[RMDB]
RNA sequence: GGGAACGACUCGAGUAGAGUCGAAAAAAACGAAUGCUAAUACCCCAUAUGCUUUUGAGUGAAACGGAUUUAUCCGCCUAGAGAGAAGCUCGCGGCUGAUUAGCUUGUUGGUAAGGUAAGAGCUUACGAGGAGGAAUUAUUUCGAUAAUUCCUCCUCAAAAGAAACAACAACAACAAC
Reactivity to DMS in 0.01 (KOAc 150mM, MgCl2 10mM, bicine 150mM(pH8.5), 24C), signal-to-noise 2, nucleotides 027 to 126: a020a040a080c080g000a100a030u010g010c010u010a030a060u010a130c110c020c000c030a110u000a070u000g000c000u000u000u000u030g000a090g010u000g010a070a120a150c030g000g000a040u000u010u000a040u010c010c020g010c050c050u000a160g020a160g000a200g000a070a130g010c040u000c140g020c230g000g000c060u010g000a070u000u010a020g020c010u000u000g000u000u000g000g010u000a060a040g000g010u010a060a050g010a110g010c020u000u000a020c290